[RMDB]
RNA sequence: GGGAACGACUCGAGUAGAGUCGAAAAGUGGAGGCUGCAGAACAACAAAGAUGGCUGCCUGCUCCAUCCUCUGGGAUUUCCAUCCCAGAGGGGCACCGACCUGAUCCAGUGGGAAUGCUCCUGUAUAAGGUGUCCUGCAACCCCUGUUGCGGGGGGAAAUAAUCGGAGUAUUCGUACUCCGAUUAUUAAAAGAAACAACAACAACAAC
Reactivity to 2A3 in 0.01 (KOAc 150mM, MgCl2 10mM, bicine 150mM(pH8.5), 24C), signal-to-noise 3, nucleotides 027 to 156: g050u050g000g020a030g060g080c060u040g000c040a010g040a220a070c040a040a000c010a060a280a070g100a150u130g090g000c010u020g000c010c040u020g000c000u000c000c000a060u070c000c010u010c010u000g050g000g000a010u200u200u120c090c050a020u040c000c000c000a000g000a010g000g000g000g000c000a020c020c040g100a120c000c030u060g060a070u070c030c010a040g050u140g070g010g050a080a150u200g110c040u070c010c000u050g070u050a090u020a260a000g030g020u010g020u040c010c010u020g010c000a060a120c020c000c020c060u040g040u140u080g050c080g010g000g000g000g000g000a000
Reactivity to DMS in 0.01 (KOAc 150mM, MgCl2 10mM, bicine 150mM(pH8.5), 24C), signal-to-noise 2, nucleotides 027 to 156: g020u010g010g000a100g030g040c040u000g050c020a040g010a070a080c020a040a150c030a090a140a230g000a130u000g000g000c010u000g030c050c030u000g000c020u000c010c010a210u000c010c010u010c000u010g000g020g000a040u000u010u010c250c140a300u010c000c000c000a020g000a020g010g000g020g000c030a050c010c020g010a090c050c020u020g000a130u000c060c020a090g010u000g030g030g000a160a130u000g020c030u000c010c010u000g030u000a070u000a090a100g010g010u000g000u000c000c010u000g010c010a080a080c010c010c020c060u000g020u000u000g020c020g010g000g000g030g050g000a020
Record summary:
Conditions: 150 mM KOAc, 10 mM MgCl2 and 150 mM bicine (pH 8.5), 24 C. The record gives the reactivity of an RNA of 207 nucleotides to 2A3 and DMS. The DMS profile rests on 5,142 reads. For DMS the reverse transcriptase was MarathonRT. 2A3 adducts were read by reverse transcription with SuperScript II with manganese.